The record gives the reactivity of an RNA of 207 nucleotides to 2A3. Reactivities are given for positions 27 through 156. The 2A3 profile rests on 997 reads. Source: RMDB library M2RFPK, as collected in RNAgym. For 2A3 the reverse transcriptase was SuperScript II with manganese.
[RMDB]
RNA sequence: GGGAACGACUCGAGUAGAGUCGAAAACGGAAGCAUUAAAACCAUUCGAGCUAGUCAAUGCGUGGCGUGUCUCUCCGCAGCGUGGUGGCGAAUGUAAAGAGUGACUAAGCAUGUAGUACCGAGGAUGAUAAGAGCAAUUCGUUCGCGAAUUGCUCAAGAUUCGAAUUUCGUUCGCGAAAUUCGAAUCAAAAGAAACAACAACAACAAC
Reactivity to 2A3 in 0.01 (KOAc 150mM, MgCl2 10mM, bicine 150mM(pH8.5), 24C), signal-to-noise 2, nucleotides 027 to 156: c050g020g010a020a010g020c030a010u020u180a060a050a060a070c030c020a020u070u020c080g030a000g020c040u110a030g040u020c060a070a060u120g080c040g030u030g040g000c070g010u040g040u010c060u000c000u000c080c020g030c010a000g020c020g040u050g010g050u030g010g010c070g010a050a010u090g020u100a030a060a040g060a030g070u040g030a050c040u040a000a100g050c020a030u050g010u090a070g030u020a030c000c060g030a040g050g000a030u020g000a010u090a160a120g000a010g000c000a000a000u000u010c000g030u010u110c220g000c000g080a010a000u000u000g000c010u000c000a000a000